Notes:
This 177-nucleotide RNA was probed chemically with DMS and 2A3. The 2A3 profile rests on 4,924 reads. The RNA was probed in 150 mM KOAc, 10 mM MgCl2 and 150 mM bicine (pH 8.5) at 24 C. For 2A3 the reverse transcriptase was SuperScript II with manganese.

RNA sequence: GGGAACGACUCGAGUAGAGUCGAAAAGAUAUGGAGCUUCGUGGAGAGUUCUUGGACCUCGGAAACGAGCUAGAAUGGCCACGAGAGCUCCUAAGUCAAAACCAACCGUUCUUCGGAACGGUUGGAACCCCAAAUGUUAGUUCGCUAACAUUUGGGGAAAAGAAACAACAACAACAAC
Reactivity to DMS in 0.01 (KOAc 150mM, MgCl2 10mM, bicine 150mM(pH8.5), 24C), signal-to-noise 2, nucleotides 027 to 126: g000a010u000a280u000g010g010a000g010c010u000u000c000g030u010g010g010a220g010a120g000u010u010c000u000u000g010g010a150c300c010u000c010g010g000a050a080a070c000g010a010g000c020u000a010g020a000a010u000g000g000c000c010a010c000g000a090g000a040g000c010u000c000c000u000a000a080g010u000c030a070a070a100a160c000c010a010a000c000c000g000u000u000c010u000u010c150g010g010a020a000c000g010g000u000u010g000g000a010a050
Reactivity to 2A3 in 0.01 (KOAc 150mM, MgCl2 10mM, bicine 150mM(pH8.5), 24C), signal-to-noise 2, nucleotides 027 to 126: g010a020u050a020u070g000g000a000g000c020u020u010c030g010u010g000g050a280g020a040g180u020u010c000u020u050g100g120a300c020c020u000c000g000g030a030a040a030c010g020a020g000c010u010a000g010a010a020u090g210g140c010c000a010c000g080a120g030a000g110c000u000c000c000u000a020a000g010u000c020a000a020a130a190c000c010a000a010c010c000g000u000u020c000u020u020c110g160g020a000a000c000g030g000u000u000g000g010a000a000
DMS adducts were read by reverse transcription with MarathonRT.